[RMDB]
RNA sequence: GGGAACGACUCGAGUAGAGUCGAAAAGACUCAUGGGAAGUCGGCGUGACUUUUGACUAUUGUGGAUGUCCGCUUUCUGACUCUAGGUAUCUACUGUUGGUGCGGAGGUGGGAUAGUGGCGCGCCAACAUAGUCCGCAAUUUCGAUUGCGGACUAUGAAAAGAAACAACAACAACAAC
Reactivity to DMS in 0.01 (KOAc 150mM, MgCl2 10mM, bicine 150mM(pH8.5), 24C), signal-to-noise 7, nucleotides 027 to 126: g000a050c050u000c030a120u020g000g010g000a130a030g010u010c030g000g020c040g020u010g010a060c030u010u010u010u040g010a100c090u020a080u020u010g010u010g000g010a060u010g000u010c010c020g010c020u000u020u020c020u010g000a070c040u000c080u000a050g000g020u040a090u030c050u010a050c110u010g010u000u000g000g010u010g000c020g000g000a080g010g020u000g000g000g000a140u020a050g010u020g000g000c030g000c020g000c010c010a030a100
Reactivity to 2A3 in 0.01 (KOAc 150mM, MgCl2 10mM, bicine 150mM(pH8.5), 24C), signal-to-noise 9, nucleotides 027 to 126: g030a010c010u020c030a080u100g040g010g020a060a030g050u070c040g020g000c010g040u070g030a160c030u080u090u070u130g090a050c050u080a110u140u140g080u100g100g070a060u070g080u050c010c010g010c020u040u080u030c020u040g050a050c010u000c020u040a030g040g040u120a140u100c020u060a060c040u050g020u050u020g020g000u030g020c020g020g030a050g050g070u160g020g030g010a030u040a100g060u080g020g000c010g000c000g010c000c000a030a010